[RMDB]
RNA sequence: GGGAACGACUCGAGUAGAGUCGAAAAUCUCUGGGGAAGAAACAAGUGCGUGGGUAUCAACAACGUGGGUUCCCCUGGGUACAAUUUGCACGUCAACGGAAACGAUUACACAACAGGUGGUCGGUACACGAGUGACUAUUUCCGAAUUUAUGGCAGCGAAUUACCUCGGUUUCGACCGAGGUAAUUCAAAAGAAACAACAACAACAAC
Reactivity to 2A3 in 0.01 (KOAc 150mM, MgCl2 10mM, bicine 150mM(pH8.5), 24C), signal-to-noise 1, nucleotides 027 to 156: u000c010u000c060u040g010g000g020g000a010a000g060a090a220a020c040a060a060g090u130g060c010g000u100g030g000g020u220a120u300c050a040a080c020a000a020c100g000u040g010g160g010u050u000c000c000c000c000u010g000g000g050u070a030c030a090a230u000u080u150g050c030a050c110g000u000c030a070a000c010g060g050a020a120a000c010g000a000u080u220a060c060a010c000a250a210c050a070g000g130u000g000g010u000c000g050g010u050a000c100a020c030g050a070g100u020g030a020c010u070a050u120u070u000c000c020g110a030a110u160u180u050a040u070g050g000c010a020g130c070